Source: RMDB library OK2TRN, as collected in RNAgym. Chemical mapping of a 177-nucleotide RNA with DMS and 2A3. 2A3 adducts were read by reverse transcription with SuperScript II with manganese. For DMS the reverse transcriptase was MarathonRT. The reactions ran in a buffer of 150 mM KOAc, 10 mM MgCl2 and 150 mM bicine (pH 8.5), at 24 C. The 2A3 profile rests on 1,263 reads. DMS (dimethyl sulfate) methylates the pairing face of unpaired adenines and cytosines.
RNA sequence: GGGAACGACUCGAGUAGAGUCGAAAAAUAACAAGGGCAAAUGCUAUGACGCCAGAUGCUCAAUCCAAGCACCACAGUUAGGAUUGUGCUUUUCCUCAUCAAGUCGUGAAAUGAGGUCACGAAGCUCCACUUGGAGCGAAUUCGUUCGCUCCAAGUGAAAAGAAACAACAACAACAAC
Reactivity to DMS in 0.01 (KOAc 150mM, MgCl2 10mM, bicine 150mM(pH8.5), 24C), signal-to-noise 2, nucleotides 027 to 126: a020u010a070a090c140a090a080g070g010g020c050a100a110a060u010g000c050u000a080u010g010a130c140g010c030c090a080g000a070u000g020c050u010c030a060a040u000c010c020a030a140g040c020a070c140c150a070c220a100g010u000u000a130g000g000a010u010u000g010u000g000c000u000u010u000u000c030c030u000c070a040u020c170a070a060g000u010c030g030u020g010a010a090a070u000g000a050g040g010u000c050a010c090g030a040a100g020c070u030c110
Reactivity to 2A3 in 0.01 (KOAc 150mM, MgCl2 10mM, bicine 150mM(pH8.5), 24C), signal-to-noise 1, nucleotides 027 to 126: a000u190a030a020c020a000a040g020g000g000c040a110a000a050u120g000c100u160a040u230g020a040c070g000c040c020a010g050a100u110g030c020u010c000a010a000u080c010c020a000a010g100c030a040c070c040a040c070a090g030u090u080a010g020g050a080u000u000g030u000g010c000u030u030u010u010c020c000u110c030a080u060c040a080a090g090u040c020g010u030g010a040a050a010u130g000a030g090g000u020c000a000c050g020a030a020g040c000u030c050